[RMDB]
RNA sequence: GGGAACGACUCGAGUAGAGUCGAAAAGAGGACGGACUACUGGCUGGCAGAGGCUGUAUCCGGUCUGCAAACACGACAGGGCUGGAAUGUCACCUGGAGUGUCUCCGGAGUAGGACGUCCGAAGAGAGGGAUCGUUCUCGUUCGCGAGGACGAUCCCAAAAGAAACAACAACAACAAC
Reactivity to 2A3 in 0.01 (KOAc 150mM, MgCl2 10mM, bicine 150mM(pH8.5), 24C), signal-to-noise 2, nucleotides 027 to 126: g260a020g020g000a000c000g000g000a000c000u000a000c010u010g020g010c000u000g110g000c030a020g000a000g110g070c000u020g080u110a110u130c010c000g010g000u000c040u020g010c050a080a070a020c000a010c020g070a020c030a000g000g010g090c020u170g080g120a260a210u120g120u140c080a070c110c000u050g010g000a030g000u010g050u000c010u000c000c000g000g000a020g020u000a000g000g000a000c000g000u060c000c000g000a060a000g060a000g000a020